Structure probing data (2A3) for a 177-nucleotide construct. Source: RMDB library OK1LIB, as collected in RNAgym. Values cover nucleotides 27 to 126. The reactions ran in a buffer of 150 mM KOAc, 10 mM MgCl2 and 150 mM bicine (pH 8.5), at 24 C. For 2A3 the reverse transcriptase was SuperScript II with manganese.
[RMDB]
RNA sequence: GGGAACGACUCGAGUAGAGUCGAAAAGGUGGAUGGGGUUCUGAAACAGCUCGGGCGGCCGUUUCUGAAGCUCCAGAGCGGUGUCGCGCGUGCACUCGUCAAUCAUCUGGUUGGGUUUCCUGACCAGGCGACCGACACUAUUCGUAGUGUCGGUCGCAAAAGAAACAACAACAACAAC
Reactivity to 2A3 in 0.01 (KOAc 150mM, MgCl2 10mM, bicine 150mM(pH8.5), 24C), signal-to-noise 1, nucleotides 027 to 126: g040g070u090g010g050a100u030g000g070g020g000u070u000c000u040g110a080a100a010c030a020g010c000u020c000g030g030g000c010g020g000c020c000g020u060u290u020c000u000g100a180a040g040c020u060c040c020a000g000a000g010c060g000g010u060g090u210c010g020c000g000c020g000u060g010c010a020c000u170c100g150u120c110a000a040u000c000a020u060c010u010g000g000u000u000g050g000g000u060u140u000c000c000u000g000a000c000c020a010g040